Background:
An RNA of 177 nucleotides, treated with 2A3 and DMS and read out base by base.
RNA sequence: GGGAACGACUCGAGUAGAGUCGAAAAAAGACACGGGGUGGACAAUAAGAUUCCUUUACAAAGCACUGGUGUAAGUGUUCGCCUGGUGCUGCAAAAAGCGGCUCACUGGGAAUGGGGAGGAGCGUGUGAGUUAGAAUGUGUUCGCACAUUCUAACUCAAAAGAAACAACAACAACAAC
Reactivity to 2A3 in 0.01 (KOAc 150mM, MgCl2 10mM, bicine 150mM(pH8.5), 24C), signal-to-noise 4, nucleotides 027 to 126: a010a000g100a000c010a010c010g020g000g020g000u060g020g010a010c040a070a140u100a080a050g060a120u030u050c020c000u090u080u060a140c120a050a130a010g000c030a040c010u010g000g010u060g070u120a120a210g070u050g040u120u090c020g000c000c010u020g060g010u000g000c010u010g000c010a000a020a080a190a000g040c050g040g000c010u040c040a050c040u020g010g010g000a100a120u090g010g030g000g000a010g010g020a020g030c020g000u090g060u010
Reactivity to DMS in 0.01 (KOAc 150mM, MgCl2 10mM, bicine 150mM(pH8.5), 24C), signal-to-noise 2, nucleotides 027 to 126: a060a040g000a150c110a070c110g000g000g000g010u000g030g000a040c130a070a060u020a090a060g000a150u020u010c050c010u000u000u000a080c120a080a120a080g010c040a030c020u000g000g000u020g010u010a030a100g010u020g000u020u010c060g000c000c000u000g010g010u000g000c000u000g020c120a060a080a040a080a060g010c100g000g010c060u010c070a030c060u020g000g010g000a080a060u020g000g020g000g000a050g000g020a060g010c110g000u010g000u030
Record summary: Conditions: 150 mM KOAc, 10 mM MgCl2 and 150 mM bicine (pH 8.5), 24 C. For 2A3, 2,891 sequencing reads were counted.